The data come from the RNA Mapping Database (RMDB), library OK3TST.
Structure probing data (DMS and 2A3) for a 207-nucleotide construct.
The DMS profile rests on 24,766 reads.
RNA sequence: GGGAACGACUCGAGUAGAGUCGAAAACACCUUUGGGACCCUUAAGCUCUUGGUCCGUAAGUGGUUAAACUCGAAGGGAAGGGUUUAAUAAGGUUUACCACUCUUUAAUGUCUUCGUCUGUACAUCCAAGGGAGCAUGUUCCAGAGGGUAUUAAGGGCUAGAUAUUUACUUUCGAGUGAGUGUCUAGAAAAGAAACAACAACAACAAC
Reactivity to DMS in 0.01 (KOAc 150mM, MgCl2 10mM, bicine 150mM(pH8.5), 24C), signal-to-noise 6, nucleotides 027 to 156: c050a080c020c010u000u000u010g010g020g000a080c000c090c070u010u000a060a150g010c010u000c020u000u000g000g020u000c040c050g020u000a030a060g020u000g010g010u010u010a020a040a040c010u000c020g010a110a120g020g020g020a210a130g010g010g000u010u010u000a040a070u000a110a100g020g010u000u000u000a070c030c020a070c020u000c020u000u000u000a060a050u000g000u010c030u000u000c080g020u000c060u000g010u010a090c050a090u000c030c040a070a150g000g010g010a070g020c060a080u000g010u010u000c040c020a150g010a060g020g000g020u000a040u000u010a060a070g000g010g000
Reactivity to 2A3 in 0.01 (KOAc 150mM, MgCl2 10mM, bicine 150mM(pH8.5), 24C), signal-to-noise 9, nucleotides 027 to 156: c050a040c000c000u020u030u020g040g000g020a020c030c010c000u030u090a050a020g020c000u010c000u020u020g010g020u040c020c010g030u070a050a040g020u030g030g020u050u120a020a030a010c030u040c090g050a080a060g060g020g040a030a050g060g020g000u040u080u060a070a060u110a060a040g030g000u020u030u050a030c000c000a010c010u040c030u040u150u130a100a040u070g050u050c020u060u050c050g140u020c090u070g080u070a030c010a050u030c030c010a020a020g030g010g010a010g040c020a020u050g000u020u010c010c000a020g010a000g080g010g000u010a060u030u060a030a030g020g010g000